An RNA of 177 nucleotides, treated with DMS and read out base by base. For DMS the reverse transcriptase was MarathonRT.
RNA sequence: GGGAACGACUCGAGUAGAGUCGAAAAGAUGGUCUUCGAAUCCAUCGAAUACCUCGCCUUCGCUGCGAAGCAUCAGUUUUUCUGCGGCGUUUUUAGCGAGGUGGGAAUCUUUGAAUCGAAGUGUGAACGGACUAUAGCGGUUCGCCGCUAUAGUCCGAAAAGAAACAACAACAACAAC
Reactivity to DMS in 0.01 (KOAc 150mM, MgCl2 10mM, bicine 150mM(pH8.5), 24C), signal-to-noise 1, nucleotides 027 to 126: g000a040u010g030g010u000c030u000u000c020g000a040a170u020c020c030a020u010c010g020a100a090u000a080c010c000u000c000g000c010c140u000u000c000g020c000u000g040c060g000a010a050g000c060a210u000c220a110g020u020u010u000u000u010c020u010g060c020g040g020c000g010u000u010u030u010u010a100g020c000g020a030g000g020u010g000g020g000a130a120u020c020u000u010u010g030a110a040u000c010g010a020a050g010u010g030u010g010a160a210